Structure probing data (2A3 and DMS) for a 177-nucleotide construct. For DMS, 6,949 sequencing reads were counted. Source: RMDB library VIROID, as collected in RNAgym. For DMS the reverse transcriptase was MarathonRT. Reactivities are given for positions 27 through 126.
RNA sequence: GGGAACGACUCGAGUAGAGUCGAAAAAGAAUUCAAGAAUCGGAGGCAUUUCCCGUUAAGAGCUGGAAGUGCAUCUUGGAAUGGGAACCAAGGAGGAUGGAAAGAAAGGAGGAAUCCCCCGAUCCGACAUAACUUAUAGGUUCGCCUAUAAGUUAUGAAAAGAAACAACAACAACAAC
Reactivity to 2A3 in 0.01 (KOAc 150mM, MgCl2 10mM, bicine 150mM(pH8.5), 24C), signal-to-noise 3, nucleotides 027 to 126: a020g050a030a060u100u040c030a030a020g020a080a080u070c070g070g020a020g060g000c010a020u020u010u000c000c000c000g000u020u070a120a040g090a020g220c020u010g010g020a020a000g010u010g020c020a050u010c010u030u040g020g020a100a030u070g030g030g040a020a020c030c020a040a020g020g010a010g030g020a030u080g050g050a050a090a040g070a080a060a020g060g030a050g010g010a040a060u050c000c000c000c000c010g020a040u010c010c010g000a010
Reactivity to DMS in 0.01 (KOAc 150mM, MgCl2 10mM, bicine 150mM(pH8.5), 24C), signal-to-noise 5, nucleotides 027 to 126: a090g000a120a100u000u000c030a050a050g000a100a070u000c080g000g010a060g020g010c060a030u000u000u000c010c010c050g020u010u010a080a090g030a150g010c030u000g000g000a040a030g020u000g000c010a030u000c010u000u010g010g010a060a060u000g010g010g010a070a120c090c040a060a100g000g000a040g000g020a040u000g010g000a090a070a060g000a060a090a060g010g000a050g000g000a090a100u000c020c020c000c050c030g010a090u010c030c040g000a200